The record gives the reactivity of an RNA of 177 nucleotides to DMS and 2A3. Reactivities are rounded to 0.1 and cut off at 0 and 3. It was measured as part of the RMDB library OK1LIB. 2A3 adducts were read by reverse transcription with SuperScript II with manganese. The reactions ran in a buffer of 150 mM KOAc, 10 mM MgCl2 and 150 mM bicine (pH 8.5), at 24 C. The DMS profile rests on 65,376 reads. For DMS the reverse transcriptase was MarathonRT.

RNA sequence: GGGAACGACUCGAGUAGAGUCGAAAACGUGGGGACCCCACGAUGCCUCUGGGCUGCCGAUUAGCGACCGUCUCGAUUAGUUUGAGUAUGGUAAAAGGGGUUCUGCUUAGUUCGUGACUACGAGACAGUCUUAUCAGGUCUUCGGAUCUGGUAAGACAAAAGAAACAACAACAACAAC
Reactivity to DMS in 0.01 (KOAc 150mM, MgCl2 10mM, bicine 150mM(pH8.5), 24C), signal-to-noise 9, nucleotides 027 to 126: c030g010u010g000g000g010g010a100c130c010c010c010a070c060g010a060u020g000c010c000u000c120u020g010g000g020c020u000g010c060c050g000a150u030u020a080g010c110g000a040c040c060g010u000c000u000c010g000a080u020u040a110g010u020u010u010g010a050g010u030a030u020g000g010u000a020a050a090a100g000g010g000g000u010u000c010u010g000c040u000u010a060g010u010u000c040g010u010g000a160c030u010a050c080g010a100g010a080c160a120
Reactivity to 2A3 in 0.01 (KOAc 150mM, MgCl2 10mM, bicine 150mM(pH8.5), 24C), signal-to-noise 9, nucleotides 027 to 126: c020g010u050g000g020g040g060a070c020c010c000c000a010c020g020a030u110g030c000c010u040c090u130g060g040g000c030u060g070c050c040g180a200u070u170a050g050c040g040a020c020c010g040u010c000u000c000g080a100u070u120a140g180u090u060u090g020a020g020u200a050u110g020g020u060a050a040a070a080g010g010g000g000u020u010c010u030g040c020u050u090a050g020u100u050c030g040u060g070a050c030u070a050c100g020a020g030a110c060a040